Background:
Chemical mapping of a 207-nucleotide RNA with DMS and 2A3. For DMS, 2,434 sequencing reads were counted. The RNA was probed in 150 mM KOAc, 10 mM MgCl2 and 150 mM bicine (pH 8.5) at 24 C. Values cover nucleotides 27 to 156. DMS adducts were read by reverse transcription with MarathonRT.
RNA sequence: GGGAACGACUCGAGUAGAGUCGAAAAAUUACACCAACAGAGGUUCAAGAAUACCAAACAAUUAGCUGUCCAGUUUGUAUUCUUACAUCAGAAGUAACAGCCGUGUUAGUAUACUUUGAUUCGUCAUCAAUGACUGUAAUAGUAUAUGGCGUAUAUCUCAUCUGCCCUAUUUCGAUAGGGCAGAUGAAAAAGAAACAACAACAACAAC
Reactivity to DMS in 0.01 (KOAc 150mM, MgCl2 10mM, bicine 150mM(pH8.5), 24C), signal-to-noise 2, nucleotides 027 to 156: a110u000u010a070c110a300c050c070a030a070c080a150g000a070g030g000u000u000c050a070a020g020a050a030u000a020c090c090a000a030a030c020a110a160u000u000a090g020c020u000g000u000c040c060a300g000u000u000u010g010u020a020u000u030c050u000u000a110c030a100u000c090a060g030a080a190g020u020a060a100c060a060g030c010c080g010u000g020u000u010a110g040u010a030u000a010c030u000u000u000g010a290u010u000c210g010u000c020a070u000c210a090a090u000g020a020c010u010g020u020a070a040u010a080g050u000a040u000a050u000g010g030c020g020u020a100u010a150u010c050
Reactivity to 2A3 in 0.01 (KOAc 150mM, MgCl2 10mM, bicine 150mM(pH8.5), 24C), signal-to-noise 3, nucleotides 027 to 156: a020u130u070a050c020a040c020c010a030a050c030a060g110a020g050g010u080u110c060a040a000g000a010a010u020a030c080c020a050a020a000c050a060a190u200u140a020g020c040u040g100u130c060c020a030g000u010u020u040g020u010a000u000u000c010u060u080a100c050a070u080c030a030g150a240a010g060u120a050a050c010a020g090c010c050g040u020g060u100u040a050g070u050a060u080a060c020u000u070u070g040a020u030u080c030g030u000c010a050u050c020a170a200u130g040a110c000u030g010u130a060a190u040a200g010u010a070u010a020u070g000g000c000g010u050a050u010a070u170c050